RNA sequence: GGGAACGACUCGAGUAGAGUCGAAAAGAUAUGGAGACCUAAGAGGCGGAAGACUAUGAUGUAGGUCUUCGGAAACGAAGACCUACAUCACGAAUCUUCCGAACUACCUCGAAGGUCUCCUAAGUCACCAUAUAUUUGGGUUCGCCCAAAUAUAUGGAAAAGAAACAACAACAACAAC
Reactivity to DMS in 0.01 (KOAc 150mM, MgCl2 10mM, bicine 150mM(pH8.5), 24C), signal-to-noise 4, nucleotides 027 to 126: g020a050u000a240u000g000g010a030g010a000c000c000u020a040a300g020a020g000g000c010g000g000a000a000g020a030c040u000a220u010g020a020u010g020u000a000g000g000u000c000u000u010c000g020g010a040a060a140c000g010a010a000g010a010c000c000u000a000c000a000u000c000a040c150g000a060a130u000c000u000u010c010c000g000a030a020c050u030a300c020c000u000c010g010a300a040g000g010u000c000u000c000c010u010a000a090g000u010c030a300
Reactivity to 2A3 in 0.01 (KOAc 150mM, MgCl2 10mM, bicine 150mM(pH8.5), 24C), signal-to-noise 1, nucleotides 027 to 126: g000a000u040a010u090g000g020a000g010a000c000c000u010a060a030g020a010g070g000c000g000g030a020a000g030a010c050u160a300u300g010a000u000g000u000a000g000g000u000c000u000u000c010g000g010a070a030a010c000g000a010a000g000a000c030c000u000a000c000a010u010c000a000c000g010a000a060u010c000u000u000c010c000g010a000a000c010u140a030c000c020u020c000g000a010a010g000g000u000c000u010c000c000u000a000a000g000u000c010a020

The record gives the reactivity of an RNA of 177 nucleotides to DMS and 2A3. DMS adducts were read by reverse transcription with MarathonRT. Conditions: 150 mM KOAc, 10 mM MgCl2 and 150 mM bicine (pH 8.5), 24 C. The DMS profile rests on 3,789 reads. The data come from the RNA Mapping Database (RMDB), library TTRINS.